Structure probing data (DMS and 2A3) for a 177-nucleotide construct. For 2A3, 1,154 sequencing reads were counted. Values cover nucleotides 27 to 126. For DMS, 3,003 sequencing reads were counted.

RNA sequence: GGGAACGACUCGAGUAGAGUCGAAAAUCGAGGUUCAACUAUAGUUAUUACGGACUGUCGAAAGCAGUGUUUGAUUCCAAUUCCGGCGGAUACAGGUGAUAUUUUAGUUGACUGUUCAGGAGGGAAACUGUACCUCAGGUUUCGACCUGAGGUACAGAAAAGAAACAACAACAACAAC
Reactivity to DMS in 0.01 (KOAc 150mM, MgCl2 10mM, bicine 150mM(pH8.5), 24C), signal-to-noise 2, nucleotides 027 to 126: u020c120g010a170g000g010u040u020c030a030a110c050u020a010u000a040g000u000u000a050u000u000a020c040g010g010a060c070u010g000u000c010g010a030a060a170g000c050a040g020u030g000u020u010u000g000a160u030u000c030c020a070a150u020u040c050c010g000g000c140g000g010a080u040a030c060a130g000g010u000g000a010u010a010u000u000u010u000a050g030u000u000g000a070c030u010g000u020u000c110a080g020g000a110g000g000g010a120a060a090
Reactivity to 2A3 in 0.01 (KOAc 150mM, MgCl2 10mM, bicine 150mM(pH8.5), 24C), signal-to-noise 2, nucleotides 027 to 126: u070c010g030a050g040g020u100u020c000a000a010c010u030a000u040a140g080u050u060a060u100u090a020c050g090g090a050c010u000g080u080c070g220a110a030a020g010c020a000g000u040g080u150u180u160g070a110u200u120c060c010a080a020u180u050c050c010g050g000c020g010g020a090u180a190c130a110g000g150u000g010a040u000a020u020u030u020u000a040g000u020u000g000a020c040u030g080u020u100c100a110g050g020a070g000g070g000a060a150a060